[RMDB]
RNA sequence: GGGAACGACUCGAGUAGAGUCGAAAAUCAGCGUUUCGUCUGGAAUAUCACAAGAAAGGGAAGAAGUGAACGUGCUACAAGCGAGACAGAUCAGAAACCAAGACGUGAGAUUCAUCUUGCCUCUAUUACUUGAAUCGCUAAAAAUAUUUUGUGGAUAAGUAGUGUGGCGAUUCGUCGCCACACUACUAAAAGAAACAACAACAACAAC
Reactivity to 2A3 in 0.01 (KOAc 150mM, MgCl2 10mM, bicine 150mM(pH8.5), 24C), signal-to-noise 1, nucleotides 027 to 156: u050c060a020g010c020g040u050u040u040c000g050u000c050u010g000g000a060a070u100a010u110c050a100c020a080a110g050a120a050a000g030g060g030a000a070g000a070a020g010u010g100a100a030c000g030u060g020c010u090a060c020a050a010g010c050g010a040g050a080c000a000g050a050u100c040a030g080a100a010a040c060c000a040a000g070a040c060g000u030g030a040g020a070u060u050c010a090u000c070u030u090g060c040c010u030c010u070a070u180u040a030c040u020u070g100a100a000u050c010g000c010u030a000a050a040a020a100u120a130u080u150u090u070g050u010g000g060a040u040a160